[RMDB]
RNA sequence: GGGAACGACUCGAGUAGAGUCGAAAACAACUCGUGGGCGGGUGGGGAUGAACAACCGUGCAGUCCUGACCGAUCACACGAUCGUCGAGUGGAUCUCGCCGAAGGGCGAACGCGUCCGCCUAUCGGGUGCGAAGAAAACCGCACCACCCGAACUGGGCCUAUGUCCAAGUUUCGACUUGGACAUAGGAAAAGAAACAACAACAACAAC
Reactivity to 2A3 in 0.01 (KOAc 150mM, MgCl2 10mM, bicine 150mM(pH8.5), 24C), signal-to-noise 2, nucleotides 027 to 156: c010a030a040c000u030c090g000u100g000g080g030c120g050g020g060u090g010g030g000g000a030u050g040a120a060c030a080a000c080c090g060u060g010c030a040g000u030c010c000u090g040a070c010c080g130a030u020c080a100c030a010c170g000a020u000c030g020u020c050g030a020g060u100g020g100a030u020c050u000c050g000c000c000g030a130a130g090g020g000c020g000a030a020c060g020c080g110u000c000c000g010c050c010u190a210u160c020g000g000g020u000g000c010g000a040a070g150a160a190a010a000c020c020g020c000a000c000c050a030c000c010c010g060a170a120c110u110g030g020g000